[RMDB]
RNA sequence: GGGAACGACUCGAGUAGAGUCGAAAAUGGCGAGGGUGGUGUGCUGACGGAAGCGGUGCGUCGCCACCCCUGGAGCGUAGUGCUGCUCGACGAGAUCGAAAAAGCGCACCAUGACGUCCACGAACUCCGUAUUUAGCACGUUCGCGUGCUAAAUACGAAAAGAAACAACAACAACAAC
Reactivity to 2A3 in 0.01 (KOAc 150mM, MgCl2 10mM, bicine 150mM(pH8.5), 24C), signal-to-noise 6, nucleotides 027 to 126: u130g030g000c030g010a060g060g120g000u030g010g000u010g000u030g010c040u050g030a060c060g060g030a040a010g030c010g000g040u040g010c010g030u040c020g010c010c000a150c010c010c000c010u020g020g000a070g010c000g010u030a060g170u040g040c030u040g000c020u030c030g040a060c030g060a040g050a220u130c060g040a090a050a030a030a030g000c000g000c000a000c000c000a010u070g050a050c030g030u030c030c020a050c050g080a090a050c030u020c030
Reactivity to DMS in 0.01 (KOAc 150mM, MgCl2 10mM, bicine 150mM(pH8.5), 24C), signal-to-noise 3, nucleotides 027 to 126: u000g040g020c000g040a110g000g020g020u000g000g010u010g000u000g000c010u020g010a120c120g000g030a080a030g000c020g000g020u000g000c030g010u000c040g000c020c020a040c020c000c020c100u010g000g000a170g000c010g010u010a180g040u010g010c070u020g010c060u000c060g020a050c050g010a190g040a190u020c070g030a050a070a060a160a080g000c010g030c000a010c020c030a000u010g000a200c030g000u000c000c000a040c110g010a130a120c070u010c050

Structure probing data (2A3 and DMS) for a 177-nucleotide construct. It was measured as part of the RMDB library OK1LIB. Conditions: 150 mM KOAc, 10 mM MgCl2 and 150 mM bicine (pH 8.5), 24 C. The 2A3 profile rests on 8,517 reads.